Structure probing data (2A3 and DMS) for a 177-nucleotide construct. The reactions ran in a buffer of 150 mM KOAc, 10 mM MgCl2 and 150 mM bicine (pH 8.5), at 24 C. The 2A3 profile rests on 2,872 reads. The data come from the RNA Mapping Database (RMDB), library RFM100. Values cover nucleotides 27 to 126.

[RMDB]
RNA sequence: GGGAACGACUCGAGUAGAGUCGAAAAAAAUCCACCACCGAGACCUGGCCGCACCCCUCACAGGGUGAUCGCGUAGGUCGGCGUUCUGUUCGGGUGGAAGCACGGGUGAGAACUCGUGUGGACCGUUCAAAGGUCUGUAUUUCGAUACAGACCUUUGAAAAGAAACAACAACAACAAC
Reactivity to 2A3 in 0.01 (KOAc 150mM, MgCl2 10mM, bicine 150mM(pH8.5), 24C), signal-to-noise 3, nucleotides 027 to 126: a000a000a010u020c020c000a010c020c000a040c030c030g040a010g010a060c000c000u020g060g010c000c020g000c000a000c010c000c010c000u080c010a100c030a030g000g010g000u020g010a080u090c070g000c080g040u040a030g020g020u010c000g000g000c030g060u080u060c070u080g110u050u060c040g070g000g010u030g000g000a020a010g000c010a000c000g030g020g010u020g060a100g030a070a010c000u000c010g000u020g000u030g030g030a030c000c030g010u040u010
Reactivity to DMS in 0.01 (KOAc 150mM, MgCl2 10mM, bicine 150mM(pH8.5), 24C), signal-to-noise 1, nucleotides 027 to 126: a060a110a000u010c020c000a070c050c000a140c160c010g030a210g000a000c000c000u000g000g000c010c160g000c000a000c000c000c000c010u010c220a120c300a190g010g000g000u000g000a020u020c030g020c080g020u000a040g040g000u000c000g000g000c050g000u000u000c060u000g030u030u000c070g010g070g000u030g000g000a090a120g000c070a000c030g010g000g010u000g000a190g000a070a010c000u000c000g000u000g010u000g010g000a050c040c030g040u010u000